[RMDB]
RNA sequence: GGGAACGACUCGAGUAGAGUCGAAAAUCUAUCACCAGCCCAUGUUAACGACACGAAUGGGCUGUUGCAAAUUACGUAUAGCUCUUGCAACAUCGUGUCGAAACGUUCCCAAGCUAUACGCCACAAAUGUACAAGCAAUAUUCGUAUUGCUUGUACAAAAAGAAACAACAACAACAAC
Reactivity to DMS in 0.01 (KOAc 150mM, MgCl2 10mM, bicine 150mM(pH8.5), 24C), signal-to-noise 9, nucleotides 027 to 126: u010c080u000a110u020c080a110c080c030a040g000c000c000c000a110u010g010u000u010a080a160c030g010a030c010a010c010g010a060a060u000g000g010g020c050u000g000u000u000g000c100a030a040a140u010u010a090c030g010u000a010u000a010g010c010u000c180u000u000g000c070a050a040c070a050u000c010g020u000g010u000c010g020a060a060a250c070g010u000u000c000c000c000a130a040g000c010u000a000u000a000c010g010c150c180a070c180a050a060a090
Reactivity to 2A3 in 0.01 (KOAc 150mM, MgCl2 10mM, bicine 150mM(pH8.5), 24C), signal-to-noise 8, nucleotides 027 to 126: u010c010u030a130u120c040a020c090c010a010g020c010c000c000a040u060g060u110u140a200a070c030g010a000c010a000c020g040a060a090u120g000g040g000c030u010g000u000u000g010c010a010a040a110u230u110a060c010g000u010a000u000a010g010c010u030c040u160u100g030c030a030a020c010a080u040c010g000u000g010u010c010g010a130a100a000c020g000u000u000c000c000c000a000a000g000c000u000a010u000a010c010g020c030c020a170c030a030a100a070